[RMDB]
RNA sequence: GGGAACGACUCGAGUAGAGUCGAAAAGAUAUGGAAACGUAGGGAGAAGGUAUUCGGAAACGAAUACCCUUCGACGAUCUAUUGUUUCCUAAGUCACAGCCGAGCGAGUGUUCGCACUCGCUCGGAAGUUGUAAAAGCGGUUCGCCGCUUUUACAACAAAAGAAACAACAACAACAAC
Reactivity to 2A3 in 0.01 (KOAc 150mM, MgCl2 10mM, bicine 150mM(pH8.5), 24C), signal-to-noise 1, nucleotides 027 to 126: g000a000u000a000u040g000g000a010a000a000c000g010u000a020g060g010g010a000g010a010a000g000g020u010a000u000u020c000g030g000a020a000a000c010g000a000a010u010a000c040c020c030u020u000c010g300a100c010g000a000u000c010u000a010u090u300g000u000u010u010c000c000u000a000a000g000u000c050a030c060a120g100c000c000g000a000g030c000g010a020g000u110g070u230u210c300g150c120a030c040u000c000g000c020u000c000g000g000a000a020
Reactivity to DMS in 0.01 (KOAc 150mM, MgCl2 10mM, bicine 150mM(pH8.5), 24C), signal-to-noise 2, nucleotides 027 to 126: g010a010u010a020u000g000g000a000a000a000c000g000u000a000g000g000g010a020g020a040a030g000g010u000a010u000u000c000g020g010a030a030a040c010g010a010a000u010a000c300c250c080u000u000c000g010a110c300g000a010u020c000u000a010u000u010g010u000u010u000c000c000u010a000a050g000u000c010a200c300a180g000c020c000g000a030g000c010g030a020g040u000g030u010u000c300g000c020a010c000u000c010g000c010u000c010g020g000a000a000
Chemical mapping of a 177-nucleotide RNA with 2A3 and DMS. The DMS profile rests on 2,155 reads. As a SHAPE reagent, 2A3 marks flexible, mostly unpaired nucleotides at the ribose 2'-OH. It was measured as part of the RMDB library TTRDES. For DMS the reverse transcriptase was MarathonRT. For 2A3, 2,730 sequencing reads were counted.